[RMDB]
RNA sequence: GGGAACGACUCGAGUAGAGUCGAAAACGUUUCUACAACAACAAGUAGCUGGGCAUGGUGGCGUACAGCUGUAGUCCCAGCUACUCAGAAGGCUGAGGCAGAUCACUUGAGCCCAGGAGUUCGAGGCUGCAGUGAGCUAUGAUCACACCACUGUGCACCUAAAUAGGCGAUUCGUCGCCUAUUUAGGAAAAGAAACAACAACAACAAC
Reactivity to 2A3 in 0.01 (KOAc 150mM, MgCl2 10mM, bicine 150mM(pH8.5), 24C), signal-to-noise 3, nucleotides 027 to 156: c040g010u020u040u030c050u120a110c050a210a020c000a060a000c010a020a060g000u000a000g020c000u010g000g020g000c060a050u100g070g070u120g050g030c040g130u230a090c150a150g020c000u040g030u090a030g140u150c000c000c000a010g000c000u000a000c010u000c000a010g000a050a010g060g000c060u040g030a070g080g060c010a000g000a110u080c030a040c200u060u060g050a020g000c000c010c020a080g030g100a120g020u050u080c060g020a050g030g000c020u050g030c030a010g020u010g040a040g000c060u070a080u170g050a040u110c020a050c020a020c070c000a030c030u050g000u050g030c020a040
Reactivity to DMS in 0.01 (KOAc 150mM, MgCl2 10mM, bicine 150mM(pH8.5), 24C), signal-to-noise 1, nucleotides 027 to 156: c070g000u000u000u010c010u000a100c070a060a090c130a120a100c060a040a090g000u010a010g050c010u000g020g020g060c020a150u010g050g030u000g000g030c030g020u000a080c130a150g030c010u000g000u000a120g010u000c020c000c010a020g010c020u000a000c010u000c040a020g030a160a070g000g050c000u010g020a110g010g030c030a050g020a100u000c050a020c000u000u010g000a070g000c010c020c020a120g040g010a150g000u000u000c060g010a100g060g020c010u010g030c050a050g000u010g000a070g000c040u010a130u010g000a140u010c090a100c000a030c010c030a040c030u000g030u000g000c000a300